[RMDB]
RNA sequence: GGGAACGACUCGAGUAGAGUCGAAAACACCCGCAAUUCGUUGCGGGUGAGAGCACCACUCCUGCGGGUGUUAAGGCCAUACGGACAGCCGGGUGCAAAGCCAUAGCAGGUCCUUCGGGACCUGCAAAUAUCGUAUACUAUUCGUAGUAUACGAUAUAAAAGAAACAACAACAACAAC
Reactivity to DMS in 0.01 (KOAc 150mM, MgCl2 10mM, bicine 150mM(pH8.5), 24C), signal-to-noise 6, nucleotides 027 to 126: c000a010c000c000c000g030c000a010a030u000u010c170g020u000u000g020c020g010g000g020u000g000a020g000a100g000c010a030c010c000a130c040u000c020c020u010g030c130g020g010g010u000g000u000u010a080a110g010g020c010c020a090u000a100c150g000g000a060c070a130g010c020c040g000g000g010u000g020c020a080a080a140g000c040c030a050u010a110g010c000a010g000g010u000c000c000u000u000c180g030g010g000a020c000c000u000g010c000a020a030
Reactivity to 2A3 in 0.01 (KOAc 150mM, MgCl2 10mM, bicine 150mM(pH8.5), 24C), signal-to-noise 4, nucleotides 027 to 126: c000a000c000c010c000g000c000a020a040u090u080c190g080u070u020g000c000g000g000g000u020g000a010g010a010g000c020a000c010c000a010c020u040c000c010u060g020c230g080g030g010u020g030u080u140a100a040g020g000c010c000a020u050a100c070g020g010a020c010a020g010c020c010g020g000g010u010g000c000a030a030a000g020c010c010a030u090a040g010c000a000g030g000u000c020c000u050u130c230g070g010g000a000c000c020u000g010c010a010a010

Chemical mapping of a 177-nucleotide RNA with DMS and 2A3. In probing experiments dimethyl sulfate is read out at A N1 and C N3, which are open when not base-paired. Conditions: 150 mM KOAc, 10 mM MgCl2 and 150 mM bicine (pH 8.5), 24 C. For DMS the reverse transcriptase was MarathonRT. Source: RMDB library M2PK50, as collected in RNAgym. The 2A3 profile rests on 9,361 reads. The DMS profile rests on 10,155 reads.